Conditions: 150 mM KOAc, 10 mM MgCl2 and 150 mM bicine (pH 8.5), 24 C. This 177-nucleotide RNA was probed chemically with 2A3 and DMS.
[RMDB]
RNA sequence: GGGAACGACUCGAGUAGAGUCGAAAAAUUCCGGUGACUUGAUUACACGCUCGCAUUCAUGGUCACUUCCGAAGCGCUUUAGUGCCUUCCGUCCCCAAACCGCCAACAGCCAGGGCGGCCUCUCCCCUAUGGCUAGAAUAUUCGUAUUCUAGCCAUAAAAAGAAACAACAACAACAAC
Reactivity to 2A3 in 0.01 (KOAc 150mM, MgCl2 10mM, bicine 150mM(pH8.5), 24C), signal-to-noise 9, nucleotides 027 to 126: a000u050u010c010c010g010g010u030g020a050c020u050u040g050a040u110u160a080c070a030c090g070c030u060c040g050c040a060u050u060c030a020u100g040g000u020c010a010c040u090u030c030c020g050a060a010g020c020g020c070u110u150u140a090g050u080g070c010c000u010u040c010c010g040u030c010c000c000c000a040a100a090c030c020g020c030c010a050a040c010a100g030c020c010a040g030g030g000c000g000g000c000c000u010c000u010c000c000c000c000
Reactivity to DMS in 0.01 (KOAc 150mM, MgCl2 10mM, bicine 150mM(pH8.5), 24C), signal-to-noise 8, nucleotides 027 to 126: a220u010u000c020c010g010g010u000g000a060c050u010u010g010a070u010u010a080c110a090c100g000c060u020c080g000c070a060u010u000c050a030u020g020g010u000c020a040c030u010u010c090c070g000a060a080g010c100g020c020u000u000u020a080g010u010g010c030c010u000u010c030c030g010u000c010c010c000c020a050a100a130c050c030g010c030c020a080a090c120a100g010c070c070a090g000g010g020c020g000g000c040c010u000c020u000c010c000c000c080